Chemical mapping of a 207-nucleotide RNA with DMS and 2A3.
The 2A3 profile rests on 1,544 reads.
Reactivities are given for positions 27 through 156.
2A3 adducts were read by reverse transcription with SuperScript II with manganese.
The RNA was probed in 150 mM KOAc, 10 mM MgCl2 and 150 mM bicine (pH 8.5) at 24 C.

RNA sequence: GGGAACGACUCGAGUAGAGUCGAAAACUAAUUUAUCCACUCCGAUUGCGGCAAAGUUGGUGACGAAAAGUACGUUAACUGGGAAGAACUUUCAUCUACAUGACCUUUGACGUUAUUACUUGCGAGGUUGGCCAAGAUCACAGAGUAGAGAAUGUCACAGUUUUAGCUAGUUCGCUAGCUAAAACUGAAAAGAAACAACAACAACAAC
Reactivity to DMS in 0.01 (KOAc 150mM, MgCl2 10mM, bicine 150mM(pH8.5), 24C), signal-to-noise 2, nucleotides 027 to 156: c080u040a060a080u010u010u000a160u050c000c040a110c020u020c020c040g000a130u000u000g020c230g040g000c000a080a050a130g000u020u010g020g040u040g040a100c040g010a040a050a070a130g010u000a070c080g060u010u000a060a190c080u000g010g000g040a090a100g020a060a120c130u000u000u010c060a020u000c020u000a060c140a110u000g020a160c080c020u000u000u010g010a060c070g020u000u000a080u030u000a070c030u000u020g020c140g000a160g000g050u000u010g040g000c050c020a010a290g000a070u010c020a040c080a130g010a070g000u000a060g000a130g000a070a080u000g000u000c060a140
Reactivity to 2A3 in 0.01 (KOAc 150mM, MgCl2 10mM, bicine 150mM(pH8.5), 24C), signal-to-noise 3, nucleotides 027 to 156: c010u020a050a260u060u060u130a120u060c010c020a030c010u030c040c020g100a120u040u050g010c010g010g000c030a100a070a120g070u030u050g030g020u030g010a000c040g100a040a070a040a050g060u040a030c050g030u090u060a080a070c110u110g030g060g020a050a070g050a050a040c030u040u150u100c060a070u040c050u090a060c010a130u110g050a030c000c000u040u060u160g020a050c020g020u010u060a070u080u090a110c040u060u090g030c050g030a040g080g000u080u050g070g000c010c000a030a000g020a010u010c010a040c080a060g040a000g000u080a020g030a000g060a070a020u080g050u070c020a000